[RMDB]
Conditions: 150 mM KOAc, 10 mM MgCl2 and 150 mM bicine (pH 8.5), 24 C. Chemical mapping of a 207-nucleotide RNA with 2A3 and DMS. As a SHAPE reagent, 2A3 marks flexible, mostly unpaired nucleotides at the ribose 2'-OH.

RNA sequence: GGGAACGACUCGAGUAGAGUCGAAAAGAUUCCUCGUUGUUGAGCGAGGUUUAAACAAAUCGACCACACAAACGUAGAGCCGACUACGGAUUUAAAAAUUAAGGCAUUAAGUGUGAUAAGGAGACAAAAAACGAUGUUGUGUUCGCACAACAUCGAACGUUACGGAAGAGUUCGCUCUUCCGUAACGAAAAGAAACAACAACAACAAC
Reactivity to 2A3 in 0.01 (KOAc 150mM, MgCl2 10mM, bicine 150mM(pH8.5), 24C), signal-to-noise 3, nucleotides 027 to 156: g090a070u200u090c000c000u000c000g020u020u000g010u020u010g000a000g000c010g010a000g010g030u050u070u050a020a030a020c070a000a000a020u000c000g000a000c000c000a000c000a000c010a020a230a030c010g010u000a000g000a000g030c000c000g040a000c000u010a000c000g030g020a010u090u300u290a230a300a000a010a040u160u150a000a000g000g000c010a000u100u220a160a090g010u000g010u000g010a010u040a020a040g190g040a070g030a080c160a050a140a010a050a050a050c000g000a000u000g000u000u000g000u000g010u050u080c130g050c060a000c000a000a000c000a000u000c000g000a010a000
Reactivity to DMS in 0.01 (KOAc 150mM, MgCl2 10mM, bicine 150mM(pH8.5), 24C), signal-to-noise 1, nucleotides 027 to 156: g040a300u000u020c000c000u000c000g020u000u000g050u000u020g010a080g010c030g010a060g050g000u020u000u000a030a090a110c130a060a220a150u000c010g060a010c000c000a060c010a260c020a250a070a110c010g020u000a050g000a300g000c080c030g010a100c020u000a010c070g030g000a300u000u000u000a040a110a130a120a100u000u020a040a060g000g000c080a220u010u010a080a180g010u000g000u000g030a070u000a050a080g000g000a250g020a060c060a000a040a010a030a010a180c000g000a000u000g000u000u000g000u010g000u000u000c300g000c000a020c000a000a000c000a020u010c010g000a010a030
For 2A3, 1,764 sequencing reads were counted. DMS (dimethyl sulfate) methylates the pairing face of unpaired adenines and cytosines. For DMS the reverse transcriptase was MarathonRT. 2A3 adducts were read by reverse transcription with SuperScript II with manganese.